[RMDB]
RNA sequence: GGGAACGACUCGAGUAGAGUCGAAAAAGGUAGUCGUCACCAAGGAAGUUCCGCAUGUCUAUGAGGAGGAGUAUGAGGUGGAGGUGCCAUACCUAGCUACUGAACUGGUGCUACCAAUGGUGGGCACGGUCUCCAGGAGCUUCGGCUCCUGGAGACCAAAAGAAACAACAACAACAAC
Reactivity to 2A3 in 0.01 (KOAc 150mM, MgCl2 10mM, bicine 150mM(pH8.5), 24C), signal-to-noise 1, nucleotides 027 to 126: a000g110g040u220a150g010u300c240g110u040c010a050c100c070a000a000g240g180a000a080g030u180u000c000c000g000c000a000u080g080u060c000u000a100u190g000a000g040g040a070g000g000a000g000u040a230u190g100a080g120g000u040g000g000a070g040g000u140g000c020c000a000u010a040c000c000u000a000g000c070u000a000c060u010g000a030a000c110u040g000g000u000g020c000u020a090c000c000a080a010u180g010g000u110g000g100g050c000a000c000